[RMDB]
RNA sequence: GGGAACGACUCGAGUAGAGUCGAAAAGAUAUGGAAUAAUAGUAGCAACAGCAAUAAGUCGGAAACGACUUGAUUGACAUGCUACGUUAUUCCUAAGUCAAAAGUAGCAACCUUCGGGUUGCUACAAGACUAAAGACUGGUUCGCCAGUCUUUAGUCAAAAGAAACAACAACAACAAC
Reactivity to 2A3 in 0.01 (KOAc 150mM, MgCl2 10mM, bicine 150mM(pH8.5), 24C), signal-to-noise 3, nucleotides 027 to 126: g000a010u020a010u100g010g020a000a000u010a020a010u050a220g030u030a010g040c120a090a160c140a300g040c000a010a040u010a020a000g010u000c000g010g010a010a030a010c000g030a010c010u010u060g110a040u000u000g020a020c210a240u300g000c000u000a000c010g000u000u000a000u000u000c000c000u020a030a000g010u000c020a080a040a060a160g000u000a000g020c000a000a020c010c010u050u110c300g150g000g000u000u000g000c000u000a010c000a000a000
Reactivity to DMS in 0.01 (KOAc 150mM, MgCl2 10mM, bicine 150mM(pH8.5), 24C), signal-to-noise 3, nucleotides 027 to 126: g010a020u010a070u000g010g000a030a000u000a000a000u000a090g020u000a000g010c000a080a090c240a110g030c010a020a000u000a010a010g000u010c000g010g010a030a020a020c000g010a020c000u010u000g000a010u000u000g000a010c040a300u010g010c000u010a000c000g010u000u000a000u000u000c000c000u010a000a130g000u000c010a100a070a090a180g020u000a010g000c000a010a010c010c000u000u000c300g040g020g020u000u000g010c000u000a000c000a040a100
Conditions: 150 mM KOAc, 10 mM MgCl2 and 150 mM bicine (pH 8.5), 24 C. The record gives the reactivity of an RNA of 177 nucleotides to 2A3 and DMS. In probing experiments dimethyl sulfate is read out at A N1 and C N3, which are open when not base-paired. DMS adducts were read by reverse transcription with MarathonRT. Values are in units of 0.01, from 0 to 300, in steps of 10. 2A3 is a SHAPE reagent: it acylates the 2'-hydroxyl of flexible nucleotides of all four kinds. It was measured as part of the RMDB library TTRDES.